RNA sequence: GGGAACGACUCGAGUAGAGUCGAAAAUCAUCGUCGGCGUGGGCUUGGGGGAUAACGAUUCGCUUGACGACGACACCCUGCGUCGUGCAGCUGGCGAUGCAGCUCGAAGCUUGGCGGGUGUUCAGCACUGUAAGUUUUGUUUCGACAAAACUUACAGAAAAGAAACAACAACAACAAC
Reactivity to 2A3 in 0.01 (KOAc 150mM, MgCl2 10mM, bicine 150mM(pH8.5), 24C), signal-to-noise 5, nucleotides 027 to 126: u050c010a000u020c010g040u010c010g020g020c050g030u070g030g030g020c040u040u060g060g000g000g000g040a050u070a120a060c030g120a190u080u080c010g010c050u110u250g050a160c010g000a010c000g010a000c000a060c020c000c020u040g020c010g020u030c030g070u050g020c030a070g020c030u020g000g000c010g010a010u020g000c010a010g020c010u030c030g040a080a010g000c040u060u080g060g020c020g000g030g000u030g030u030u030c020a020g040c040a020
Reactivity to DMS in 0.01 (KOAc 150mM, MgCl2 10mM, bicine 150mM(pH8.5), 24C), signal-to-noise 6, nucleotides 027 to 126: u000c030a050u000c020g020u010c020g020g020c030g020u000g000g010g010c030u000u000g020g000g010g000g010a160u000a060a080c100g010a150u000u000c030g020c030u010u010g020a100c030g000a040c040g010a110c250a110c030c030c000u000g010c190g010u000c020g030u010g010c060a100g020c030u000g010g000c010g000a030u000g000c090a070g000c140u000c040g010a080a080g010c050u000u000g010g020c050g020g010g010u000g000u000u000c050a080g000c130a220
The record gives the reactivity of an RNA of 177 nucleotides to 2A3 and DMS.
DMS adducts were read by reverse transcription with MarathonRT.
Source: RMDB library OK2TRN, as collected in RNAgym.